[RMDB]
RNA sequence: GGGAACGACUCGAGUAGAGUCGAAAAUGCCGACCCGAAGAGGAAAGAAGAACACGGACGCGAACCCGUAAGUGGAACCCUGAUCCUUUAUUGGGGGGUACACUCGAGGAGUGGAAGGCGCUGCCCGGACGUUCCCGAUUCGUCGGGAACAAAAGAAACAACAACAACAAC
Reactivity to 2A3 in 0.01 (KOAc 150mM, MgCl2 10mM, bicine 150mM(pH8.5), 24C), signal-to-noise 9, nucleotides 027 to 129: u130g010c000c010g020a070c000c010c030g020a040a020g020a020g040g050a070a040a030g070a040a010g010a020a010c060a010c070g030g030a020c040g030c040g070a060a080c010c000c010g020u060a060a020g020u020g030g020a080a050c010c000c000u040g050a110u150c060c040u150u210u160a150u160u120g010g000g000g000g010g000u040a030c020a010c010u030c030g080a070g010g020a040g030u100g020g030a040a030g030g010c040g000c050u070g030c000c000c020g020g010a030c060
Reactivity to DMS in 0.01 (KOAc 150mM, MgCl2 10mM, bicine 150mM(pH8.5), 24C), signal-to-noise 9, nucleotides 027 to 129: u050g040c000c000g020a160c040c020c040g030a040a020g030a080g050g030a030a040a030g000a050a000g030a060a030c110a040c100g000g000a080c060g030c040g030a070a080c080c020c020g030u000a080a040g000u030g080g000a180a130c030c010c010u000g030a090u010c150c110u030u040u070a100u040u020g030g020g020g000g030g020u050a120c000a060c000u020c060g000a110g010g000a050g040u010g020g030a090a090g000g000c090g050c070u040g030c050c020c060g000g000a100c120
The record gives the reactivity of an RNA of 170 nucleotides to 2A3 and DMS.
The RNA was probed in 150 mM KOAc, 10 mM MgCl2 and 150 mM bicine (pH 8.5) at 24 C.
It was measured as part of the RMDB library 15KLIB.